[RMDB]
RNA sequence: GGGAACGACUCGAGUAGAGUCGAAAACCUCCAGCAAGGUGCAGACCGGAGUCUGUGCCUCGUUCCCUGGGGCGAUAGCUACUGCUGGAGGGUUUUGCAUUAUCCGUAUCUGGAUAACACGUCCCCCUGAGAUUAGCUACUUCGGUAGCUAAUCUCAAAAAGAAACAACAACAACAAC
Reactivity to DMS in 0.01 (KOAc 150mM, MgCl2 10mM, bicine 150mM(pH8.5), 24C), signal-to-noise 3, nucleotides 027 to 126: c000c000u000c000c000a000g000c010a140a040g020g000u010g010c010a020g000a000c010c300g010g000a140g010u000c000u040g020u010g020c000c000u000c000g000u000u000c020c010c020u030g010g010g010g010c040g000a110u020a230g030c020u010a090c180u040g000c000u000g000g000a000g020g010g010u000u020u030u000g020c120a280u000u000a000u000c000c000g040u020a220u070c190u020g000g000a010u000a000a070c190a120c070g000u020c010c000c010c180c120
Reactivity to 2A3 in 0.01 (KOAc 150mM, MgCl2 10mM, bicine 150mM(pH8.5), 24C), signal-to-noise 5, nucleotides 027 to 126: c010c000u000c000c020a010g010c020a020a050g030g010u020g000c010a010g000a010c030c080g210g010a090g020u010c000u000g010u010g020c000c000u000c000g010u030u040c010c020c030u070g020g030g000g000c030g070a090u100a080g010c010u100a070c060u120g000c000u000g000g000a000g000g000g000u040u200u090u040g020c050a040u010u020a000u000c000c030g080u150a150u180c130u230g000g010a000u010a010a020c080a010c070g070u050c000c000c010c000c010
Record summary: An RNA of 177 nucleotides, treated with DMS and 2A3 and read out base by base. The RNA was probed in 150 mM KOAc, 10 mM MgCl2 and 150 mM bicine (pH 8.5) at 24 C. It was measured as part of the RMDB libraries RFM100 and RFMREP. For 2A3, 3,633 sequencing reads were counted.